[RMDB]
RNA sequence: GGGAACGACUCGAGUAGAGUCGAAAAAUGCCCACCAGUUCGAUUGCGGCGUAGGCGAAUACCACCCCCGAGGUGACCAGCACUAUGGGCAGCAGACCGGUUGGCACGAUGCCUCCAUGGCUGCUCCACGUAGUUCACCGUUCGCGGUGAACUACGUAAAAGAAACAACAACAACAAC
Reactivity to 2A3 in 0.01 (KOAc 150mM, MgCl2 10mM, bicine 150mM(pH8.5), 24C), signal-to-noise 3, nucleotides 027 to 126: a000u080g030c000c000c000a000c000c000a010g040u100u100c040g060a160u070u300g030c040g000g040c080g000u020a030g060g000c030g020a010a030u070a090c040c000a040c000c000c000c010c050g040a050g020g010u010g010a080c070c000a020g010c050a060c080u090a110u130g020g020g000c060a020g000c020a030g040a120c000c000g010g020u060u010g010g000c000a020c270g060a050u300g010c000c030u000c010c040a140u160g010g000c010u010g010c000u000c010c000
Reactivity to DMS in 0.01 (KOAc 150mM, MgCl2 10mM, bicine 150mM(pH8.5), 24C), signal-to-noise 1, nucleotides 027 to 126: a040u000g000c070c000c000a090c100c090a090g030u040u000c080g010a200u040u000g020c040g010g040c000g000u020a100g000g010c060g000a010a010u070a050c110c070a050c030c000c000c020c040g030a040g000g000u000g110a000c030c070a160g000c060a100c000u000a110u020g000g000g000c180a020g000c000a070g000a200c040c120g040g000u040u030g000g010c040a290c230g040a130u040g030c000c000u000c010c000a040u000g000g000c040u000g000c030u000c050c040
This 177-nucleotide RNA was probed chemically with 2A3 and DMS. Reactivities are given for positions 27 through 126. The reactions ran in a buffer of 150 mM KOAc, 10 mM MgCl2 and 150 mM bicine (pH 8.5), at 24 C. For DMS, 1,507 sequencing reads were counted. For 2A3, 1,323 sequencing reads were counted. In probing experiments dimethyl sulfate is read out at A N1 and C N3, which are open when not base-paired.